[RMDB]
RNA sequence: GGGAACGACUCGAGUAGAGUCGAAAAUGCAAGUGUCCUGGGCGUGCUGCUGUUAAUCGUUGAUGCAGUCCGGGAACACCAGUGCAUCGAUGCGGCCAACAACGAGGAUAAGGAAGACACAGAUCAACAUCACGGUCAGUUUCGACUGACCGUGAUGAAAAGAAACAACAACAACAAC
Reactivity to 2A3 in 0.01 (KOAc 150mM, MgCl2 10mM, bicine 150mM(pH8.5), 24C), signal-to-noise 1, nucleotides 027 to 126: u040g000c030a030a040g000u010g000u060c000c000u020g040g040g000c100g070u120g000c020u030g010c030u060g050u180u120a100a080u220c030g030u070u190g070a080u070g040c000a010g010u000c000c000g020g020g020a040a020c010a000c010c000a000g050u010g000c010a000u000c030g050a010u070g020c000g000g010c030c020a010a000c010a000a010c070g020a050g000g020a060u080a100a070g060g040a010a050g010a020c030a020c000a060g060a060u050c000a000a090
Reactivity to DMS in 0.01 (KOAc 150mM, MgCl2 10mM, bicine 150mM(pH8.5), 24C), signal-to-noise 3, nucleotides 027 to 126: u010g000c010a070a090g030u000g020u000c000c000u010g000g000g010c060g010u010g030c010u000g010c080u000g010u010u010a110a130u030c130g000u010u010g030a110u000g020c000a120g010u000c060c020g000g000g020a050a060c040a030c010c180a090g000u000g020c010a010u000c040g000a030u000g010c070g000g000c020c040a060a040c100a020a070c070g010a090g010g000a080u010a090a080g000g000a030a030g000a120c150a070c110a060g000a080u010c140a070a170
Record summary:
An RNA of 177 nucleotides, treated with 2A3 and DMS and read out base by base. The reactions ran in a buffer of 150 mM KOAc, 10 mM MgCl2 and 150 mM bicine (pH 8.5), at 24 C. For 2A3 the reverse transcriptase was SuperScript II with manganese. As a SHAPE reagent, 2A3 marks flexible, mostly unpaired nucleotides at the ribose 2'-OH. It was measured as part of the RMDB library OK2TST.